This 177-nucleotide RNA was probed chemically with DMS and 2A3.

[RMDB]
RNA sequence: GGGAACGACUCGAGUAGAGUCGAAAAGGUCGGUGUCACGCAUCUACACGACGGGUUACGUCCACGAGCCCCCGUGCGCGAUGAAGCUGUGCGUAAGCUCCUAACCGAAUACCAACUGGCGGACAUCAACGGCAGUCUAAUUCGUUAGACUGCCGUUAAAAGAAACAACAACAACAAC
Reactivity to DMS in 0.01 (KOAc 150mM, MgCl2 10mM, bicine 150mM(pH8.5), 24C), signal-to-noise 3, nucleotides 027 to 126: g000g010u010c090g000g000u000g000u040c100a050c020g010c050a050u020c110u000a210c030a060c060g060a090c270g000g000g020u000u020a070c090g000u020c110c020a060c010g000a120g010c020c010c020c040c000g000u010g000c070g010c080g000a110u030g000a070a090g010c020u010g000u030g030c030g000u010a070a080g000c030u000c040c040u000a070a100c050c020g030a110a030u010a130c060c050a130a070c060u010g000g000c030g030g000a050c050a040u010c130
Reactivity to 2A3 in 0.01 (KOAc 150mM, MgCl2 10mM, bicine 150mM(pH8.5), 24C), signal-to-noise 4, nucleotides 027 to 126: g080g000u110c050g020g000u040g040u050c060a060c100g030c010a090u020c020u080a050c070a000c040g100a010c010g000g000g020u060u130a070c060g040u060c080c040a080c060g030a010g010c000c000c000c000c000g030u030g040c090g020c050g040a070u130g020a040a040g000c030u040g010u050g110c020g050u040a040a030g000c010u010c010c010u030a070a020c020c000g040a030a030u140a130c030c020a050a030c060u060g070g000c030g000g020a030c000a060u080c040
About this RNA:
DMS adducts were read by reverse transcription with MarathonRT. For DMS, 4,017 sequencing reads were counted. The reactions ran in a buffer of 150 mM KOAc, 10 mM MgCl2 and 150 mM bicine (pH 8.5), at 24 C. Reactivities are given for positions 27 through 126. 2A3 adducts were read by reverse transcription with SuperScript II with manganese.